[RMDB]
RNA sequence: GGGAACGACUCGAGUAGAGUCGAAAAGAUAUGGAUGAGGAUGAUGAGGCCAACAGCGAGAUCGGUAGUAUUCUCGGAAACGAGAAUACUACCGAUCUCGACAUGGCUCGCAUCUCAUCCUAAGUCAUCUAGUAACUUAGUUCGCUAAGUUACUAGAAAAAGAAACAACAACAACAAC
Reactivity to 2A3 in 0.01 (KOAc 150mM, MgCl2 10mM, bicine 150mM(pH8.5), 24C), signal-to-noise 1, nucleotides 027 to 126: g070a040u150a040u250g000g000a000u000g050a020g300g070a040u020g060a140u110g040a120g190g280c020c010a100a060c070a190g130c000g000a030g000a030u000c040g000g000u000a000g000u020a020u000u020c000u000c000g050g000a000a170a020c020g010a000g000a010a000u000a010c000u000a000c010c020g000a030u030c000u020c000g000a010c000a000u020g020g000c000u000c020g000c000a000u000c010u000c020a000u000c000c000u020a100a010g040u000c020a020
Reactivity to DMS in 0.01 (KOAc 150mM, MgCl2 10mM, bicine 150mM(pH8.5), 24C), signal-to-noise 7, nucleotides 027 to 126: g010a030u000a300u010g010g010a010u010g010a050g020g010a030u000g000a070u010g010a140g020g020c000c000a020a130c300a180g010c020g010a020g000a010u000c000g010g010u000a000g010u000a010u000u000c000u000c000g000g010a070a090a210c000g010a020g010a020a010u000a000c000u000a000c010c000g000a000u000c000u000c000g010a020c090a190u000g000g010c000u000c020g000c010a010u000c000u000c000a000u000c000c000u000a020a060g010u000c040a180